[RMDB]
The data come from the RNA Mapping Database (RMDB), library TTRDEL. An RNA of 177 nucleotides, treated with DMS and 2A3 and read out base by base. Values are in units of 0.01, from 0 to 300, in steps of 10. The 2A3 profile rests on 5,952 reads. Values cover nucleotides 27 to 126.

RNA sequence: GGGAACGACUCGAGUAGAGUCGAAAAGAUAUGGAAUCGAACUUUUGACGCCAUUCGGUUCGGAAACGAACCUAUUUGGCGAUAAGUCGAUUCCUAAGUCAAAGUGGCAGAGUUCGCUCUGCCACAAGACAGAGACAUUCUUCGGAAUGUCUCUGUCAAAAGAAACAACAACAACAAC
Reactivity to DMS in 0.01 (KOAc 150mM, MgCl2 10mM, bicine 150mM(pH8.5), 24C), signal-to-noise 3, nucleotides 027 to 126: g010a060u000a300u010g010g010a010a010u000c000g000a070a050c010u000u000u010u000g010a300c080g010c000c000a000u000u000c300g000g010u000u000c000g020g000a060a060a170c000g010a000a000c000c000u000a020u010u000u000g000g020c000g010a050u000a010a010g010u000c000g000a020u000u000c000c000u000a010a080g000u000c030a070a150a100g020u000g000g010c010a010g010a050g010u000u000c230g020c000u000c010u000g010c000c010a000c010a020a040
Reactivity to 2A3 in 0.01 (KOAc 150mM, MgCl2 10mM, bicine 150mM(pH8.5), 24C), signal-to-noise 4, nucleotides 027 to 126: g020a000u040a030u150g010g010a030a000u010c010g020a120a260c040u100u070u130u280g280a170c180g010c010c000a010u060u050c040g010g000u000u020c010g010g000a040a060a000c010g010a000a010c000c000u050a140u020u060u080g010g000c030g020a030u010a010a000g010u000c000g010a000u000u010c010c000u000a060a010g000u010c060a090a060a120g010u000g000g000c010a000g010a010g020u070u150c230g060c130u000c000u010g000c000c010a000c000a000a000